[RMDB]
RNA sequence: GGGAACGACUCGAGUAGAGUCGAAAAGGAGGCAUUCGUGCCUCCAAAAACCGUAGGCUAUACACAGCUUUUGACGCUUCUCGUGUUCGAAAGAGCACACGCGAGAAGCGAUAAGCUGCGUAUAGCCUAAACGGAAAAAGAACGCUUCGGCGUUCAACACAUAAGAAUCCUUCGGGAUUCUUAUGUGAAAAGAAACAACAACAACAAC
Reactivity to DMS in 0.01 (KOAc 150mM, MgCl2 10mM, bicine 150mM(pH8.5), 24C), signal-to-noise 2, nucleotides 027 to 156: g010g030a030g080g010c010a040u000u010c300g030u000g020c020c000u000c030c010a000a050a060a080a060c000c000g010u000a060g000g040c000u000a020u010a010c000a020c000a010g020c000u000u020u000u000g050a290c080g000c000u010u000c000u000c010g010u000g010u000u000c030g020a180a120a210g010a130g010c050a090c180a020c070g040c020g000a010g010a020a010g050c000g000a010u000a000a000g030c020u000g040c010g020u000a010u000a000g040c010c000u000a000a000a030c000g010g000a040a050a080a150a100g000a030a040c000g050c020u000u000c300g060g010c000g030u000u000c000a050a270
Reactivity to 2A3 in 0.01 (KOAc 150mM, MgCl2 10mM, bicine 150mM(pH8.5), 24C), signal-to-noise 3, nucleotides 027 to 156: g010g000a000g010g030c020a030u050u110c240g140u070g000c000c000u020c000c000a040a000a000a000a000c000c000g010u020a020g000g000c000u000a000u000a010c040a000c000a000g020c030u070u040u030u110g250a120c010g010c000u030u000c000u000c000g050u040g040u140u080c080g140a270a190a060g110a040g100c100a030c030a000c160g030c020g010a000g000a010a010g000c000g000a000u000a000a000g000c000u000g000c000g000u000a000u000a000g020c000c000u000a000a000a000c000g020g120a000a050a020a000a070g050a000a000c000g000c010u040u100c300g190g020c000g000u000u040c010a020a000